[RMDB]
RNA sequence: GGGAACGACUCGAGUAGAGUCGAAAAGAUAUGGACGUGAACUACAGCGACAGGAGCGAUGAAAUCGGAAACGAUGGAGCUCCGAACGCUGCACGUCCUAAGUCAAACUGUGGGUUCGCCCACAGAACGCAUCCACAUUCUUCGGAAUGUGGAUGCGAAAAGAAACAACAACAACAAC
Reactivity to DMS in 0.01 (KOAc 150mM, MgCl2 10mM, bicine 150mM(pH8.5), 24C), signal-to-noise 1, nucleotides 027 to 126: g000a010u000a300u000g010g000a010c000g030u000g020a080a010c090u000a260c040a000g040c050g060a110c300a150g010g000a000g050c000g030a100u000g000a100a100a000u000c000g010g000a070a100a080c010g000a010u000g000g000a120g010c040u010c000c000g000a130a130c050g000c040u000g000c040a000c000g000u010c000c000u000a000a080g050u000c070a120a020a300c000u000g030u000g000g020g030u000u010c210g000c000c010c000a000c000a020g000a060a040
Reactivity to 2A3 in 0.01 (KOAc 150mM, MgCl2 10mM, bicine 150mM(pH8.5), 24C), signal-to-noise 1, nucleotides 027 to 126: g040a030u130a040u170g020g000a000c000g000u010g040a060a090c100u200a180c300a000g000c000g010a040c110a220g030g000a010g030c000g100a300u060g120a020a000a070u000c040g010g010a030a050a000c000g030a000u040g000g000a000g000c010u010c000c000g020a000a000c010g000c000u000g020c020a010c010g020u000c010c000u010a020a010g010u000c000a130a040a060c000u030g000u040g000g060g000u030u090c270g150c000c000c000a000c000a010g030a060a000